The data come from the RNA Mapping Database (RMDB), library OK2TRN. Chemical mapping of a 177-nucleotide RNA with 2A3 and DMS. The DMS profile rests on 29,723 reads.

[RMDB]
RNA sequence: GGGAACGACUCGAGUAGAGUCGAAAAGGAUCCUAAGUAGUCCGGGUAACUGCCUCCAGAUCAGUUACCAGUGAGGACUACACAAUUUGUCAUGGAUCUGGAGGAUGACGGGUUGAGAAGAGGAUCGCUACUCGUAUGUAUUCGUACAUACGAGUAGAAAAGAAACAACAACAACAAC
Reactivity to 2A3 in 0.01 (KOAc 150mM, MgCl2 10mM, bicine 150mM(pH8.5), 24C), signal-to-noise 8, nucleotides 027 to 126: g020g000a010u010c010c000u060a180a050g020u010a000g010u000c020c010g050g010g040u030a030a020c010u020g020c000c040u050c050c020a030g020a250u090c020a030g050u050u070a060c000c030a010g080u050g080a170g000g020a000c000u010a000c000a000c000a000a030u020u020u040g020u020c020a020u040g070g080a150u080c080u100g060g030a040g060g010a010u020g000a000c000g000g010g020u020u020g070a100g030a230a050g070a030g030g000a010u010c010g000
Reactivity to DMS in 0.01 (KOAc 150mM, MgCl2 10mM, bicine 150mM(pH8.5), 24C), signal-to-noise 9, nucleotides 027 to 126: g010g000a020u000c000c000u000a120a160g010u000a010g010u000c000c000g010g020g010u000a070a020c020u000g000c090c030u010c060c090a060g010a110u010c100a060g010u000u000a050c020c020a090g010u010g020a190g000g000a030c010u000a000c010a140c050a030a030u000u000u000g010u000c030a040u000g010g010a130u000c040u000g000g000a070g010g010a050u000g000a020c020g000g000g000u000u000g000a200g010a120a110g010a040g010g010a020u000c010g010

Source information:
DMS adducts were read by reverse transcription with MarathonRT.